[RMDB]
RNA sequence: GGGAACGACUCGAGUAGAGUCGAAAACUGCAGGAGUUAGGAUUGUCUGGUACGAUUGAGACGGUAACCCAAGGCGAUCGGGUGCUUUAUCGCUUACGCUUUGGCGCUUGGCAAAAUAUCGCUGAAGCUCAAGUACCCCAUUCGUGGGGUACUUGAGAAAAGAAACAACAACAACAAC
Reactivity to DMS in 0.01 (KOAc 150mM, MgCl2 10mM, bicine 150mM(pH8.5), 24C), signal-to-noise 2, nucleotides 027 to 126: c060u000g000c030a050g030g000a110g030u000u000a060g000g000a040u000u010g000u010c030u020g000g020u000a040c100g020a090u010u010g010a060g010a050c070g000g010u010a060a130c130c010c020a090a130g010g020c030g010a030u010c100g010g010g040u000g020c080u000u000u000a050u010c120g010c050u010u010a090c140g030c030u010u000u000g010g020c020g000c150u000u010g030g000c060a060a070a070a110u010a030u000c060g000c030u000g020a060a030g040
Reactivity to 2A3 in 0.01 (KOAc 150mM, MgCl2 10mM, bicine 150mM(pH8.5), 24C), signal-to-noise 1, nucleotides 027 to 126: c020u060g000c020a110g010g090a050g030u060u150a060g140g020a060u150u000g020u020c050u070g040g030u080a010c000g030a130u020u120g060a060g030a050c010g060g000u000a020a050c000c020c070a000a080g010g040c010g030a030u070c030g120g000g040u070g050c030u180u090u090a120u170c020g000c000u060u050a060c090g020c000u090u070u060g020g000c030g010c070u080u070g030g000c070a050a050a090a050u140a010u020c010g020c070u000g000a040a010g010

Record summary
The record gives the reactivity of an RNA of 177 nucleotides to DMS and 2A3. The RNA was probed in 150 mM KOAc, 10 mM MgCl2 and 150 mM bicine (pH 8.5) at 24 C. Reactivities are given for positions 27 through 126. DMS adducts were read by reverse transcription with MarathonRT. 2A3 adducts were read by reverse transcription with SuperScript II with manganese. The DMS profile rests on 1,561 reads.